Structure probing data (DMS and 2A3) for a 177-nucleotide construct. High 2A3 reactivity points to a flexible backbone, as in loops and unpaired stretches. Source: RMDB library RFMREP, as collected in RNAgym.
RNA sequence: GGGAACGACUCGAGUAGAGUCGAAAAGACCCGCAACGCUGGCGGAGUCGAAAAUCUGUUCACGACAAAUUGAUACUGCCUGGAUUCGUACGAACCGGGACGGAUGGAAAACUAGCCUUCGGGCUAGCGUAAUCGAAAUCUUCGGAUUUCGAUUACGAAAAGAAACAACAACAACAAC
Reactivity to DMS in 0.01 (KOAc 150mM, MgCl2 10mM, bicine 150mM(pH8.5), 24C), signal-to-noise 2, nucleotides 027 to 126: g000a050c030c010c030g030c030a040a100c240g000c160u010g020g020c030g030g010a230g020u000c000g000a040a060a050a070u000c040u050g020u000u000c040a130c050g000a040c140a020a170a100u000u000g000a100u000a130c100u010g010c020c020u020g010g030a170u000u000c010g000u010a070c190g010a110a080c080c010g010g010g000a060c030g010g010a040u000g000g000a060a040a060a270c000u000a010g000c000c000u010u010c190g020g010g030c000u000a010g000
Reactivity to 2A3 in 0.01 (KOAc 150mM, MgCl2 10mM, bicine 150mM(pH8.5), 24C), signal-to-noise 1, nucleotides 027 to 126: g000a020c000c050c000g000c010a160a130c050g030c260u040g080g000c040g030g010a110g010u050c050g000a000a010a000a040u000c020u050g090u110u110c070a020c090g050a050c110a080a110a050u130u080g050a100u110a200c000u090g040c000c020u060g130g000a300u000u030c020g000u220a150c190g010a040a010c010c030g000g000g050a040c010g010g010a000u080g030g060a030a150a040a000c030u000a000g000c000c000u010u020c160g100g000g000c000u020a000g020
Overview: The 2A3 profile rests on 888 reads.